An RNA of 207 nucleotides, treated with DMS and 2A3 and read out base by base. 2A3 adducts were read by reverse transcription with SuperScript II with manganese. Conditions: 150 mM KOAc, 10 mM MgCl2 and 150 mM bicine (pH 8.5), 24 C.
RNA sequence: GGGAACGACUCGAGUAGAGUCGAAAAGAAAGAAAGAAAGCGGUUGGGUGGGUCCAUCGACCGUCGUGGCGUAUUCGGACGCUUUACCACGACGCGAGGAAAUAGCGAGACCGGCCACCCCCUUUAACAGAGGUAUAGUAGUUCGCUACUAUACCAAGAUGGAUUCUAAGUUCGCUUAGAAUCCAUCAAAAGAAACAACAACAACAAC
Reactivity to DMS in 0.01 (KOAc 150mM, MgCl2 10mM, bicine 150mM(pH8.5), 24C), signal-to-noise 1, nucleotides 027 to 156: g000a150a050a100g010a170a080a160g010a070a110a100g000c090g000g000u010u000g000g020g060u000g010g000g010u000c010c010a050u000c120g000a050c120c000g020u000c000g040u000g010g000c030g050u000a070u000u050c110g040g010a180c070g030c110u000u000u000a030c000c000a020c000g010a010c000g010c010g000a100g000g020a060a040a100u030a060g020c080g000a080g020a070c000c000g000g090c040c010a030c020c010c000c000c050u010u000u000a090a140c090a130g000a200g020g020u000a000u000a020g010u000a000g010u000u000c300g010c010u010a010c000u000a000u000a010c000c030a010a080
Reactivity to 2A3 in 0.01 (KOAc 150mM, MgCl2 10mM, bicine 150mM(pH8.5), 24C), signal-to-noise 2, nucleotides 027 to 156: g030a000a040a000g030a020a130a010g030a030a050a000g140c130g010g120u130u060g110g010g040u070g050g010g040u000c010c010a090u100c010g000a020c050c030g000u000c010g000u020g020g020c050g000u100a110u060u160c040g070g050a050c040g000c040u100u080u090a060c020c000a000c030g000a000c000g000c020g010a050g010g060a120a080a050u060a030g010c030g010a040g030a040c010c000g010g000c010c000a010c010c020c000c000c010u030u070u060a140a060c080a080g070a060g180g000u000a000u000a000g000u000a000g000u000u030c140g000c170u000a010c000u000a010u010a000c000c030a000a000